[RMDB]
RNA sequence: GGGAACGACUCGAGUAGAGUCGAAAAGAAAGAAAGAAAGCGGUUGGGUGGGUCCAUCGAACGUCGUGGCGUAUUCGGACGCUUUACCACGACGCGAGGAAAUAGCGAGACCGACCACCCCCUUUAACAGAGGUAUAGUAGUUCGCUACUAUACCAAGUUUGAGUAUGUGUUCGCACAUACUCAAACAAAAGAAACAACAACAACAAC
Reactivity to DMS in 0.01 (KOAc 150mM, MgCl2 10mM, bicine 150mM(pH8.5), 24C), signal-to-noise 1, nucleotides 027 to 156: g000a180a070a110g010a100a140a100g000a040a070a160g040c110g030g010u000u010g000g030g040u000g000g000g000u000c010c020a090u000c100g020a090a020c000g010u000c020g010u020g010g040c010g040u000a120u000u000c030g000g010a050c130g020c120u010u010u000a020c050c030a010c050g030a010c000g020c010g000a180g040g000a090a080a100u000a100g010c030g000a170g010a100c030c000g010a040c030c010a040c000c000c000c020c010u000u030u000a070a140c120a150g030a160g000g000u000a000u000a000g010u020a010g010u000u010c300g010c010u000a050c000u000a000u010a010c010c050a000a020
Reactivity to 2A3 in 0.01 (KOAc 150mM, MgCl2 10mM, bicine 150mM(pH8.5), 24C), signal-to-noise 3, nucleotides 027 to 156: g050a010a030a000g020a050a100a000g040a060a040a010g060c150g020g070u110u090g140g000g000u030g020g030g010u000c020c000a090u030c030g010a080a050c000g000u010c000g010u020g010g000c050g020u070a100u070u220c090g080g090a020c020g030c030u120u100u070a040c020c010a010c010g000a000c020g010c020g020a040g010g050a030a160a080u060a030g050c050g020a070g030a090c010c020g030a020c010c000a030c000c010c000c010c010u080u110u020a130a060c090a070g060a040g110g000u010a000u000a000g000u000a000g000u010u020c140g010c140u000a000c000u000a000u010a000c000c000a000a000